[RMDB]
RNA sequence: GGGAACGACUCGAGUAGAGUCGAAAAUGAUCGAGAGAUCUAACGAUGUACGCGAGUCCCGUGCACCGACUCGAGCGAAAGCUCGGUCGAAAGACCGCGUACAUCGGUCGGCAAGUGUACAGUCGACAUAAUACCAUACCUUCGGGUAUGGUAUUAUAAAAGAAACAACAACAACAAC
Reactivity to 2A3 in 0.01 (KOAc 150mM, MgCl2 10mM, bicine 150mM(pH8.5), 24C), signal-to-noise 8, nucleotides 027 to 126: u100g000a000u010c010g000a010g000a000g000a110u010c000u010a070a020c020g000a000u000g000u010a000c000g020c010g040a080g080u020c040c010c020g040u080g070c050a080c090c000g010a010c030u090c250g000a000g000c010g060a130a010a000g000c000u000c010g000g000u000c000g000a020a010a000g020a010c030c010g000c000g000u000a000c000a000u000c000g000g000u010c000g000g020c030a110a150g090u060g050u230a070c060a040g010u010c000g000a000c000
Reactivity to DMS in 0.01 (KOAc 150mM, MgCl2 10mM, bicine 150mM(pH8.5), 24C), signal-to-noise 9, nucleotides 027 to 126: u000g000a000u000c000g000a270g000a240g000a010u000c000u010a090a200c020g010a010u000g010u000a000c000g010c000g000a140g010u000c000c070c090g010u000g010c110a170c180c150g000a010c000u010c020g010a010g010c000g000a130a080a160g010c000u000c000g000g000u000c000g000a040a110a130g000a030c030c000g010c010g000u000a000c010a000u000c000g010g020u000c010g010g010c020a050a090g010u010g010u010a070c130a150g010u000c010g010a050c110
Record summary:
The record gives the reactivity of an RNA of 177 nucleotides to 2A3 and DMS. For 2A3, 31,979 sequencing reads were counted. DMS adducts were read by reverse transcription with MarathonRT. The DMS profile rests on 39,140 reads. Conditions: 150 mM KOAc, 10 mM MgCl2 and 150 mM bicine (pH 8.5), 24 C. For 2A3 the reverse transcriptase was SuperScript II with manganese.